[RMDB]
RNA sequence: GGGAACGACUCGAGUAGAGUCGAAAAUGUGGCUUUGGCUUCAUCUUCGUCGAUGAUGCUCAUGGCAAAUCCGACGUGUACCAGCACCCACUGGCCCAGUAGAUCGGCAGGGUUACCUUCACAAAUCCGGUCCACUCACCUUCGGGUGAGUGGACCGAAAAGAAACAACAACAACAAC
Reactivity to 2A3 in 0.01 (KOAc 150mM, MgCl2 10mM, bicine 150mM(pH8.5), 24C), signal-to-noise 1, nucleotides 027 to 126: u200g070u180g150g000c000u070u070u040g100g000c000u000u000c000a170u000c000u190u020c040g180u170c210g000a020u020g000a000u000g000c100u100c100a160u230g010g000c000a000a000a230u000c020c000g000a030c070g110u030g000u000a120c070c070a000g060c070a050c000c000c000a000c000u090g140g000c000c020c020a000g070u090a080g000a150u010c030g010g000c000a040g130g000g010u000u020a080c020c020u050u060c090a050c000a160a040a000u000c120

An RNA of 177 nucleotides, treated with 2A3 and read out base by base. Reactivities are given for positions 27 through 126. 2A3 adducts were read by reverse transcription with SuperScript II with manganese.